[RMDB]
RNA sequence: GGGAACGACUCGAGUAGAGUCGAAAAGAUAUGGAUGAGGGACAUGCUACGACCUCGGAAACGAGGUCAGUAGCAACAGCCCUAUCCUAAGUCAAAACGAUAUACUCUCUUCGGAGAGUAUAUCGAAGAGGUAUCCUAAGUUCGCUUAGGAUACCUCAAAAGAAACAACAACAACAAC
Reactivity to DMS in 0.01 (KOAc 150mM, MgCl2 10mM, bicine 150mM(pH8.5), 24C), signal-to-noise 3, nucleotides 027 to 126: g000a050u010a300u000g010g000a030u000g020a020g010g020g000a020c090a190u000g010c000u010a010c000g000a010c010c010u000c000g010g000a090a060a180c000g010a010g010g010u000c010a020g030u000a000g000c010a010a050c230a140g010c030c020c000u000a050u000c010c000u000a040a120g020u000c050a030a060a080a230c020g000a000u000a000u000a000c000u000c000u000c000u000u030c200g020g000a010g000a000g000u000a000u000a000u000c000g000a030a060
Reactivity to 2A3 in 0.01 (KOAc 150mM, MgCl2 10mM, bicine 150mM(pH8.5), 24C), signal-to-noise 2, nucleotides 027 to 126: g040a010u070a050u130g010g010a040u070g300a110g030g000g000a050c150a300u060g020c010u000a000c000g000a010c010c000u000c010g000g030a080a060a020c000g000a010g000g000u000c040a010g010u000a000g020c000a000a000c020a020g050c000c020c000u010a000u000c000c000u020a180a010g050u030c040a010a040a060a130c010g000a000u000a000u000a010c010u010c010u000c020u100u070c290g030g010a000g010a000g010u000a000u000a000u000c000g000a000a010